[RMDB]
This 207-nucleotide RNA was probed chemically with 2A3 and DMS. For DMS the reverse transcriptase was MarathonRT. The reactions ran in a buffer of 150 mM KOAc, 10 mM MgCl2 and 150 mM bicine (pH 8.5), at 24 C. The DMS profile rests on 2,897 reads.
RNA sequence: GGGAACGACUCGAGUAGAGUCGAAAAUUUUGCCAUGUUGCCCAGGCUGGUCUGGAACUCUGAAGACUCAAACCAUCAGCCUGUGUUAGCCUACUAAACUGCUGGUGUUACAGGAGUGAGCCACUGUACCCAGCCUAGAAUUUAAAAUCAGAUAGAAUACCUAAAUCGAGUUCGCUCGAUUUAGGUAAAAAGAAACAACAACAACAAC
Reactivity to 2A3 in 0.01 (KOAc 150mM, MgCl2 10mM, bicine 150mM(pH8.5), 24C), signal-to-noise 2, nucleotides 027 to 156: u100u110u100u040g050c000c030a040u140g000u070u090g010c010c000c000a000g000g000c000u000g010g010u000c050u030g020g060a160a020c010u060c020u120g080a170a060g070a140c030u040c130a000a080a060c000c000a050u040c040a000g000c000c000u000g000u000g010u010u070a050g000c000c010u060a070c020u060a130a180a160c040u060g000c000u010g000g000u030g060u130u000a000c000a000g030g000a030g080u020g060a010g020c060c000a070c030u000g000u020a000c010c000c000a000g010c000c000u020a010g010a030a000u090u130u140a110a040a030a080u140c120a000g080a070u300a080g150a110a050
Reactivity to DMS in 0.01 (KOAc 150mM, MgCl2 10mM, bicine 150mM(pH8.5), 24C), signal-to-noise 2, nucleotides 027 to 156: u010u000u010u010g060c010c040a140u000g020u000u000g000c040c090c040a040g010g010c030u020g020g020u020c050u000g010g010a110a090c030u000c020u020g000a110a140g000a110c040u000c060a030a110a260c010c010a020u010c020a060g030c020c000u000g020u010g030u000u000a080g030c100c060u000a150c090u000a050a120a230c060u000g010c000u000g020g000u000g010u020u000a060c000a070g000g010a130g060u010g010a120g010c010c040a080c020u000g040u000a030c020c020c000a040g000c000c020u000a020g000a060a170u000u000u000a050a050a090a080u000c070a070g000a170u000a110g000a110a240